[RMDB]
RNA sequence: GGGAACGACUCGAGUAGAGUCGAAAAGCGCCAGCGGACUGCGCAGCGACGCCCGGGUCGAACACCCCACCAUAGUGCUGCCCAUCACCGAGAUCGGCGCGCCUGACGGCGACGUCUUGGCUCGCUACCUCUCUCCAGUGUUCGCACUGGAGAGAGGAAAAGAAACAACAACAACAAC
Reactivity to 2A3 in 0.01 (KOAc 150mM, MgCl2 10mM, bicine 150mM(pH8.5), 24C), signal-to-noise 4, nucleotides 027 to 126: g000c010g030c020c040a090g070c070g090g030a120c090u050g000c020g000c030a010g060c010g020a010c020g000c000c030c000g000g030g000u020c040g030a110a030c040a190c050c020c000c000a040c030c020a070u080a090g050u070g020c040u030g020c000c000c010a050u080c010a010c020c040g020a030g020a160u100c050g020g000c000g000c000g000c000c000u030g040a020c030g010g030c020g020a080c010g040u010c000u040u080g020g010c010u010c000g010c010u060a050
Reactivity to DMS in 0.01 (KOAc 150mM, MgCl2 10mM, bicine 150mM(pH8.5), 24C), signal-to-noise 1, nucleotides 027 to 126: g000c090g030c100c030a050g060c020g000g000a100c020u000g000c190g010c020a070g010c040g000a040c160g000c000c010c080g000g000g010u000c000g000a060a180c200a170c020c050c000c040a010c030c080a030u030a050g030u030g070c050u000g000c000c000c000a000u030c030a050c030c020g020a130g010a000u000c200g000g010c030g000c190g000c060c000u000g070a040c020g000g000c150g010a080c000g000u010c000u020u000g020g000c060u020c010g000c060u000a150
An RNA of 177 nucleotides, treated with 2A3 and DMS and read out base by base. Source: RMDB library OK1LIB, as collected in RNAgym. High DMS reactivity at an A or C suggests that its Watson-Crick edge is free. The 2A3 profile rests on 3,527 reads.